[RMDB]
RNA sequence: GGGAACGACUCGAGUAGAGUCGAAAAUACGCGAGGUUCGCCUCGCGUAAAAGAGGAGCGUAAACGUGAGCGUACGUAGUGCUGUACAUCGUUCCUUCACGAAUGCACAUGGUUUCGACCAUGUGAAGUGAGGCUUACGGUUCGCCGUAAGCCUCACAAAAGAAACAACAACAACAAC
Reactivity to DMS in 0.01 (KOAc 150mM, MgCl2 10mM, bicine 150mM(pH8.5), 24C), signal-to-noise 1, nucleotides 027 to 126: u000a000c000g000c010g000a020g000g000u020u010c280g060c020c000u000c000g000c030g050u000a000a030a080a130g000a060g010g010a050g000c020g000u020a000a020a050c160g020u010g000a080g000c140g000u000a060c090g000u000a110g050u000g030c020u000g010u000a030c090a050u020c000g030u000u000c000c010u000u000c050a020c200g000a080a190u000g010c010a000c000a020u000g000g000u000u000u020c160g000a000c000c000a010u110g000u000g000a040a060
Reactivity to 2A3 in 0.01 (KOAc 150mM, MgCl2 10mM, bicine 150mM(pH8.5), 24C), signal-to-noise 2, nucleotides 027 to 126: u070a000c020g000c010g020a000g000g040u030u060c100g080c040c000u010c000g000c000g020u000a000a000a000a000g060a000g060g000a050g010c050g060u180a050a070a070c020g030u030g040a020g080c040g030u030a020c070g060u100a040g050u060g120c040u080g020u150a010c020a060u060c010g010u030u000c020c000u000u090c050a080c000g150a160a090u200g000c010a010c010a010u000g010g010u010u100u130c240g110a000c000c000a000u000g020u020g000a030a000